[RMDB]
RNA sequence: GGGAACGACUCGAGUAGAGUCGAAAACUUCAACUCUUGGCUAGUCUCUCUAAGCUGGGAGAAUAAAUCUUAUCAGUCUUGAACAAUUUAAGUUCUGUUAUCCGAUCUUCAAAAAUUAUAUCGAUAUCCUAUGAACUAUUUUCGAAUAGUUCAUAGGAAAAGAAACAACAACAACAAC
Reactivity to DMS in 0.01 (KOAc 150mM, MgCl2 10mM, bicine 150mM(pH8.5), 24C), signal-to-noise 2, nucleotides 027 to 126: c120u000u010c070a150a240c030u000c020u020u000g010g000c020u000a030g020u040c140u080c080u030c030u010a090a100g050c010u000g000g010g010a040g010a150a130u000a030a050a070u060c080u000u010a050u000c000a040g000u010c100u010u010g000a050a040c030a120a100u000u010u020a030a120g020u000u000c020u000g000u000u000a070u020c020c040g010a030u000c110u000u010c070a050a070a030a150a030u040u040a050u000a110u020c010g000a190u010a110u010
Reactivity to 2A3 in 0.01 (KOAc 150mM, MgCl2 10mM, bicine 150mM(pH8.5), 24C), signal-to-noise 9, nucleotides 027 to 126: c010u110u070c020a070a080c010u000c000u020u020g010g000c000u010a030g040u100c030u040c010u010c010u190a100a060g020c020u020g000g000g010a020g020a010a010u100a020a030a010u040c060u080u090a070u150c030a020g120u010c030u080u050g030a040a030c030a090a150u080u110u120a100a030g010u050u020c020u030g030u080u070a050u060c040c030g060a070u010c050u150u070c150a070a060a060a070a150u240u170a130u080a060u130c020g030a030u010a030u130